Notes:
The record gives the reactivity of an RNA of 207 nucleotides to DMS and 2A3. Source: RMDB library OK3TST, as collected in RNAgym. For 2A3, 4,984 sequencing reads were counted. DMS adducts were read by reverse transcription with MarathonRT.
RNA sequence: GGGAACGACUCGAGUAGAGUCGAAAACUGCAGGUCAACGGUACUUCUUCAGAUCAGCUAUUGCAGAAGAGAGGUUAGCCAAGCGCUCUGGGCCAGUGCGACUGUAUAUAGGAGCUUUUAAUUUCAACCAGAAGCUAACUCUCUCCGAAACAAUGAGGAUUUAUGAUUUAUUCGUAAAUCAUAAAUCAAAAGAAACAACAACAACAAC
Reactivity to DMS in 0.01 (KOAc 150mM, MgCl2 10mM, bicine 150mM(pH8.5), 24C), signal-to-noise 3, nucleotides 027 to 156: c030u010g010c050a110g030g010u000c030a100a120c120g030g000u000a050c040u000u000c020u020u000c070a100g040a070u000c030a110g000c060u000a060u010u000g000c020a100g020a200a040g010a020g020a040g020g010u000u010a020g010c010c040a070a160g010c060g030c040u000c030u000g020g010g030c070c070a100g030u010g020c040g010a090c040u000g030u010a070u000a160u020a180g000g000a100g010c030u000u020u000u000a030a120u000u000u000c050a050a130c060c010a100g000a070a110g020c000u000a010a010c000u000c000u010c020u020c010c020g010a300a140a040c030a030a060u000g000a210g030
Reactivity to 2A3 in 0.01 (KOAc 150mM, MgCl2 10mM, bicine 150mM(pH8.5), 24C), signal-to-noise 6, nucleotides 027 to 156: c020u050g010c020a020g000g040u040c020a050a020c060g020g010u030a030c010u030u040c000u050u050c030a020g000a110u020c020a010g040c020u070a040u100u080g010c020a020g010a160a000g000a020g000a010g010g010u000u000a000g000c030c040a160a040g060c040g010c060u010c010u030g030g060g010c030c020a040g030u040g060c030g050a080c030u040g050u100a090u030a010u090a210g040g030a020g010c000u100u070u080u250a150a160u120u210u130c050a050a040c010c010a020g020a080a010g030c000u000a000a000c010u000c000u010c000u000c230c020g030a040a030a000c010a010a050u100g010a040g110